RNA sequence: GGGAACGACUCGAGUAGAGUCGAAAAACGCCGCGCGCAAGGAUGUCCACUGGAAGCCCGUCAGCUUCGAAAUGAUGGAGUUCCGCAACAAUCUCAGCUUCGGCUGAACGCGCUAGCGGGUUGGCGCGCUGAGCAUGAGCUUCGGCUCAUGCUCAGCAAAAGAAACAACAACAACAAC
Reactivity to 2A3 in 0.01 (KOAc 150mM, MgCl2 10mM, bicine 150mM(pH8.5), 24C), signal-to-noise 2, nucleotides 027 to 126: a000c030g000c020c010g000c000g000c010g050c130a020a140g020g000a070u090g020u100c020c040a000c070u070g080g020a000a000g070c010c060c020g240u050c000a010g010c000u060u020c070g090a230a270a220u190g030a180u030g020g000a070g110u020u000c000c010g040c020a000a120c010a060a240u000c000u000c030a060g000c000u040u060c090g130g000c020u010g010a050a010c060g000c000g000c040u010a070g000c040g070g040g000u060u100g000g040c020g000c000
Reactivity to DMS in 0.01 (KOAc 150mM, MgCl2 10mM, bicine 150mM(pH8.5), 24C), signal-to-noise 1, nucleotides 027 to 126: a090c180g050c000c210g130c000g040c030g170c080a080a150g060g050a090u000g050u090c000c170a000c050u030g000g030a040a000g000c020c000c170g000u080c130a170g000c080u010u000c080g010a020a060a030u010g000a140u000g000g030a100g000u000u000c000c000g020c060a080a140c240a150a060u030c080u040c000a020g000c010u000u030c190g000g000c000u000g000a030a070c130g000c060g030c090u030a110g000c000g000g010g000u000u000g000g000c040g000c170

Structure probing data (2A3 and DMS) for a 177-nucleotide construct. For DMS, 934 sequencing reads were counted. High DMS reactivity at an A or C suggests that its Watson-Crick edge is free. Conditions: 150 mM KOAc, 10 mM MgCl2 and 150 mM bicine (pH 8.5), 24 C.